[RMDB]
RNA sequence: GGGAACGACUCGAGUAGAGUCGAAAACGCCGGUGCUGCCAGAUGUGUAGAUCAGCAACGCCAACGGGUCAGCAGAGUCAUCGGCCACGGGGAUCGGCGUAGCUGGCAGCGUCUUGCCGCGACCGAGCAGGCGUGCCGAGUUCGCUCGGCACGCCUGAAAAGAAACAACAACAACAAC
Reactivity to 2A3 in 0.01 (KOAc 150mM, MgCl2 10mM, bicine 150mM(pH8.5), 24C), signal-to-noise 1, nucleotides 027 to 126: c040g040c010c000g050g000u000g010c020u000g000c000c010a010g000a000u000g030u000g000u080a020g000a170u100c010a020g050c000a020a010c000g050c000c000a020a020c000g000g000g000u030c010a000g010c050a020g000a000g270u180c080a200u050c160g000g000c000c000a160c140g070g000g000g020a090u090c190g040g000c000g000u000a060g000c000u000g000g020c010a000g050c030g030u000c000u000u010g000c000c000g000c030g040a110c000c000g050a110g030